[RMDB]
RNA sequence: GGGAACGACUCGAGUAGAGUCGAAAAGCGGUACACUUCGGUGUACCGCAAAACCGGAAUAAACAUGGGCCCAUGAGCCGAAACGGAACGGCGUCCGCCCAAAAACGACGCCGUUCGCGGCGUCGAACUCCUGGUACACGUUCGCGUGUACCAGGAGAAAAGAAACAACAACAACAAC
Reactivity to 2A3 in 0.01 (KOAc 150mM, MgCl2 10mM, bicine 150mM(pH8.5), 24C), signal-to-noise 1, nucleotides 027 to 126: g040c000g030g000u000a000c020a010c000u070u090c230g100g000u000g000u010a000c050c000g060c010a000a000a000a000c010c000g070g160a080a170u190a170a060a030c090a170u120g000g000g000c030c040c070a120u230g080a010g010c030c020g050a200a090a000c120g090g040a090a000c000g010g000c020g050u100c080c030g060c000c010c080a140a030a000a000a000c020g040a000c000g010c000c010g000u000u050c020g050c040g020g000c020g040u000c020g000a010a020